Structure probing data (2A3 and DMS) for a 177-nucleotide construct. Source: RMDB library M2PK90, as collected in RNAgym.
RNA sequence: GGGAACGACUCGAGUAGAGUCGAAAAGACGAACGAAAAGACAAAUGUUCCACGGUGCAGAAGGGUCCCUCACAUGAGGAUCACCCAUGUAACUCGGACAGGAUAUGCUUUUGGGAAAAAGAGAGAAGUCAAACUCUAUUUUCGAAUAGAGUUUGACAAAAGAAACAACAACAACAAC
Reactivity to 2A3 in 0.01 (KOAc 150mM, MgCl2 10mM, bicine 150mM(pH8.5), 24C), signal-to-noise 4, nucleotides 027 to 126: g080a010c070g030a130a000c020g040a020a030a000a010g070a020c020a020a080a040u060g030u150u040c000c010a020c080g050g000u020g000c000a010g030a300a130g090g000g000u020c030c020c000u040c010a220c040a180u300g000a010g010g000a040u130c020a010c000c000c000a000u030g010u010a060a040c000u020c060g000g010a000c000a000g110g010a070u060a030u260g020c010u030u030u040u060g080g000g010a040a100a000a160a010g100a020g000a000g030a120a030
Reactivity to DMS in 0.01 (KOAc 150mM, MgCl2 10mM, bicine 150mM(pH8.5), 24C), signal-to-noise 6, nucleotides 027 to 126: g020a100c100g020a130a140c060g010a040a030a020a050g000a100c080a060a090a070u010g000u000u000c010c030a080c220g000g010u000g010c000a030g000a100a120g020g000g010u000c140c000c010u000c010a170c220a120u030g010a010g010g000a030u010c190a020c000c010c000a100u000g000u000a030a040c030u000c180g000g000a030c030a010g000g020a110u000a050u000g000c010u000u000u000u000g010g000g010a050a030a040a070a090g000a090g010a070g000a100a110